[RMDB]
RNA sequence: GGGAACGACUCGAGUAGAGUCGAAAAACGGUGCGGAAGUUCACGCUUCCGUGAAACGCGAAAAUCGGACGGUGGCUGCAAGUCGCAUCGCAAAACCGCGGCAAGUGGAGUUAGCGAGAGGAGGCUGAAACCAUCCAACACUUCGGUGUUGGAUGAACAUUUAAUUCCGCUUCGGCGGAAUUAAAUGAAAAGAAACAACAACAACAAC
Reactivity to 2A3 in 0.01 (KOAc 150mM, MgCl2 10mM, bicine 150mM(pH8.5), 24C), signal-to-noise 2, nucleotides 027 to 156: a000c040g030g040u100g000c010g000g020a020a040g020u140u230c110a010c140g020c000u020u000c000c000g000u000g040a030a040a000c090g030c020g050a050a030a030a080u140c040g050g000a000c030g030g000u020g030g010c030u030g010c030a040a050g010u030c040g010c050a030u030c050g000c070a090a070a030a040c030c030g000c000g070g010c060a070a130g010u050g020g040a060g000u090u030a000g050c010g010a020g020a040g060g010a010g000g050c040u020g020a090a020a020c040c000a000u020c000c000a000a000c000a000c010u030u100c170g080g010u010g000u000u000g010g000a000u000g000a000a000
Reactivity to DMS in 0.01 (KOAc 150mM, MgCl2 10mM, bicine 150mM(pH8.5), 24C), signal-to-noise 1, nucleotides 027 to 156: a010c040g030g020u000g000c000g000g000a030a040g010u000u020c220a100c220g010c020u000u040c000c030g020u010g000a010a070a080c020g040c040g000a090a080a130a060u020c000g040g010a040c040g020g010u000g020g050c010u000g040c090a060a090g000u010c000g030c000a130u010c010g000c030a050a040a120a040c170c020g000c080g010g000c050a050a180g010u010g030g030a180g000u010u000a110g010c050g000a120g000a090g040g010a030g020g020c030u000g010a040a030a130c070c000a020u010c010c010a000a040c010a000c010u010u000c300g020g020u010g040u000u000g000g000a000u000g000a020a080